[RMDB]
RNA sequence: GGGAACGACUCGAGUAGAGUCGAAAACGAACCUGGAGAUAGCUGGUUCUCUCCGAAAUAGCUUUAGGGCUAGCCUCGAACUGAGAGUCUUGGAGGUAGAGCACUGUUUGGACUAGGGGCCCUCAUCUACGCACAGAGAUUUCGAUCUCUGUGCGUAAAAAGAAACAACAACAACAAC
Reactivity to DMS in 0.01 (KOAc 150mM, MgCl2 10mM, bicine 150mM(pH8.5), 24C), signal-to-noise 1, nucleotides 027 to 126: c140g000a030a130c050c050u000g000g000a100g010a120u000a080g000c050u010g010g010u000u010c020u000c020u000c020c000g010a040a150a130u000a040g020c010u000u020u010a110g010g010g010c000u000a080g000c110c040u000c020g000a140a080c100u000g000a110g000a110g020u000c080u020u000g000g000a000g000g000u030a070g020a110g000c070a090c010u010g000u000u000u010g010g010a120c060u000a090g030g000g000g000c000c010c030u020c080a040u030c100
Reactivity to 2A3 in 0.01 (KOAc 150mM, MgCl2 10mM, bicine 150mM(pH8.5), 24C), signal-to-noise 1, nucleotides 027 to 126: c050g000a000a040c000c070u070g040g000a110g010a130u100a030g090c080u000g130g000u120u000c060u060c000u010c020c010g080a060a080a090u030a010g040c050u000u140u240a200g140g030g000c010u000a010g080c000c000u000c010g010a120a060c110u120g050a040g010a020g230u000c060u000u120g010g000a060g000g020u180a090g010a010g090c030a010c210u060g140u120u090u110g090g010a050c000u030a070g020g020g000g000c050c010c000u000c010a060u060c060
Structure probing data (DMS and 2A3) for a 177-nucleotide construct. The RNA was probed in 150 mM KOAc, 10 mM MgCl2 and 150 mM bicine (pH 8.5) at 24 C.